[RMDB]
RNA sequence: GGGAACGACUCGAGUAGAGUCGAAAACAGCGUUCUUUAGCUCAUGCCGUAGAGUUUGCAGCAAUACAAAUCUCUUGCUAUCCUUUGUACAUAACUUCAGGCUGCCUGCUUUGAAUUCUGGUGUGAAUCUAUACGCAACCUUCGGGUUGCGUAUAGAAAAAGAAACAACAACAACAAC
Reactivity to 2A3 in 0.01 (KOAc 150mM, MgCl2 10mM, bicine 150mM(pH8.5), 24C), signal-to-noise 2, nucleotides 027 to 126: c020a010g080c020g050u030u020c030u010u040u050a020g000c010u000c050a010u130g030c000c010g050u090a030g000a000g040u000u060u060g000c030a030g060c020a050a040u010a140c040a030a200a110u060c090u040c030u110u120g030c010u020a090u190c010c040u130u040u120g030u030a030c020a140u090a070a130c020u090u090c040a040g010g010c010u010g010c000c030u020g020c000u100u040u060g060a080a110u120u030c040u080g070g000u030g020u000g060a060a030
Reactivity to DMS in 0.01 (KOAc 150mM, MgCl2 10mM, bicine 150mM(pH8.5), 24C), signal-to-noise 3, nucleotides 027 to 126: c050a090g020c070g020u000u000c000u000u000u000a070g030c100u000c050a050u000g010c030c030g020u000a100g020a060g030u010u000u000g020c070a070g000c100a070a050u010a050c110a050a040a070u010c070u000c050u000u000g020c040u000a070u000c040c030u000u000u000g010u000a080c140a040u000a050a050c090u010u010c100a140g010g010c030u000g030c080c060u010g010c030u000u010u000g000a040a050u000u000c020u000g020g020u000g020u000g000a120a140